An RNA of 207 nucleotides, treated with 2A3 and DMS and read out base by base.
The RNA was probed in 150 mM KOAc, 10 mM MgCl2 and 150 mM bicine (pH 8.5) at 24 C.
Values cover nucleotides 27 to 156.
For DMS the reverse transcriptase was MarathonRT.
For DMS, 1,813 sequencing reads were counted.
For 2A3 the reverse transcriptase was SuperScript II with manganese.

[RMDB]
RNA sequence: GGGAACGACUCGAGUAGAGUCGAAAAAAGUAAGUGGUGUUGACGUUUGGGUCCUGCGCAAUGGGAAUUCAUGAACCAUGUCAGGUCCGGAAGGAAGCAGCAUUAAGUGAAACCUCUCAUGUGCCGCAGGGUUGCCUGGGCCGAGCUAACUGCUUAAGUCAAUUACAGUGUUCGCACUGUAAUUGACAAAAGAAACAACAACAACAAC
Reactivity to 2A3 in 0.01 (KOAc 150mM, MgCl2 10mM, bicine 150mM(pH8.5), 24C), signal-to-noise 3, nucleotides 027 to 156: a000a000g000u010a000a010g000u000g000g000u010g070u300u110g020a020c010g000u010u010u010g030g000g050u300c000c000u000g000c000g010c000a010a020u010g000g000g010a020a030u010u000c010a010u040g020a080a060c160c020a040u010g040u070c000a000g010g000u000c000c010g030g040a100a090g010g000a010a000g010c000a000g000c010a000u030u050a050a020g010u000g000a010a010a030c060c010u000c000u000c010a040u070g150u080g300c150c080g000c010a010g000g020g010u020u070g000c000c000u010g000g000g000c010c010g000a000g020c010u010a000a000c000u000g000c000u030u020a050a030
Reactivity to DMS in 0.01 (KOAc 150mM, MgCl2 10mM, bicine 150mM(pH8.5), 24C), signal-to-noise 1, nucleotides 027 to 156: a060a100g020u000a030a040g090u010g000g000u000g030u000u010g020a140c220g040u000u010u020g010g020g020u010c010c030u000g010c050g050c020a100a020u000g000g030g030a090a300u000u000c050a000u010g000a110a150c080c150a080u020g030u000c000a140g000g080u010c040c020g020g050a140a080g040g000a030a030g040c040a130g000c010a010u000u000a080a190g010u000g010a050a020a060c010c060u010c010u010c010a010u000g020u020g020c080c090g030c020a070g000g000g000u000u010g020c000c030u000g040g000g000c000c040g030a090g000c010u000a050a030c010u000g000c000u000u000a040a180